RNA sequence: GGGAACGACUCGAGUAGAGUCGAAAAGAUAUGGAGGGAUCCUGGGCUAUGAAGUAACUCGGAAACGAGUUAUGGAGCCUUGGAUUCCCUCCUAAGUCAAAGUAAUUAACGUUCGCGUUAAUUACAAGUUAGUGUCAAUCUUCGGAUUGACACUAACAAAAGAAACAACAACAACAAC
Reactivity to DMS in 0.01 (KOAc 150mM, MgCl2 10mM, bicine 150mM(pH8.5), 24C), signal-to-noise 2, nucleotides 027 to 126: g010a060u010a300u000g010g030a000g000g010g010a040u000c000c010u000g000g010g010c000u000a210u010g010a120a260g000u000a000a010c000u000c000g020g010a080a140a190c000g020a010g030u000u000a000u010g000g010a000g020c000c000u020u000g010g000a020u000u010c000c000c000u000c000c000u000a010a050g000u010c050a190a160a200g000u000a000a000u000u000a010a000c000g040u010u020c280g030c000g000u000u010a010a000u000u010a000c000a050a100
Reactivity to 2A3 in 0.01 (KOAc 150mM, MgCl2 10mM, bicine 150mM(pH8.5), 24C), signal-to-noise 2, nucleotides 027 to 126: g020a030u090a040u190g000g010a000g030g000g000a010u020c020c020u060g000g010g000c080u150a300u300g010a010a000g000u000a010a000c010u000c010g030g030a080a070a040c000g000a000g020u020u000a010u010g000g000a000g010c010c010u000u020g000g000a000u000u040c000c010c010u010c000c010u000a000a000g010u030c040a130a090a070g020u010a010a010u010u000a000a000c010g040u060u100c300g030c000g130u000u020a000a000u010u010a010c000a020a020